[RMDB]
RNA sequence: GGGAACGACUCGAGUAGAGUCGAAAAGCGUACUACUAUAUCUUGGACCGUCUCAACACACGAUAAGGGAGAUCCCAAAUAGGAUCUCCCUUUUGACGUGUGUGAGACGCUAGAUAUAGUAUCGCAAAACGCAGCAGAGGUUCGCCUCUGCUGCGAAACCAAUAGGAUGAUUCGUCAUCCUAUUGGUAAAAGAAACAACAACAACAAC
Reactivity to DMS in 0.01 (KOAc 150mM, MgCl2 10mM, bicine 150mM(pH8.5), 24C), signal-to-noise 2, nucleotides 027 to 156: g010c010g040u000a080c090u000a000c000u000a000u000a020u010c000u010u010g060g010a070c300c030g000u000c010u000c000a060a050c010a020c000a030c020g020a190u010a020a030g020g030g010a050g000a010u000c010c000c030a040a140a220u010a050g000g010a020u000c000u000c000c010c000u000u000u000u000g010a190c090g030u010g010u010g030u010g020a010g020a030c010g020c010u000a000g010a010u010a010u000a010g020u000a010u010c010g000c010a060a030a060a140c020g010c010a010g010c010a000g010a010g080g050u000u000c300g020c030c000u000c010u000g020c020u000g030c000g000a010a050
Reactivity to 2A3 in 0.01 (KOAc 150mM, MgCl2 10mM, bicine 150mM(pH8.5), 24C), signal-to-noise 3, nucleotides 027 to 156: g010c010g030u100a060c040u010a000c000u000a010u000a010u010c000u000u110g080g090a150c120c080g000u000c000u000c020a230a090c000a000c000a000c000g030a030u010a020a000g000g020g000a000g000a000u010c000c020c020a120a170a100u180a040g000g010a010u000c000u010c000c140c230u000u000u000u030g030a010c010g000u000g010u010g000u000g010a000g000a000c000g000c000u000a000g010a000u000a000u000a000g000u000a000u010c000g010c000a010a060a020a030c010g020c020a000g000c020a000g000a000g020g000u030u140c180g100c020c000u000c000u000g000c020u000g000c000g000a010a000
Notes:
An RNA of 207 nucleotides, treated with DMS and 2A3 and read out base by base. For DMS the reverse transcriptase was MarathonRT. For DMS, 6,718 sequencing reads were counted. For 2A3 the reverse transcriptase was SuperScript II with manganese.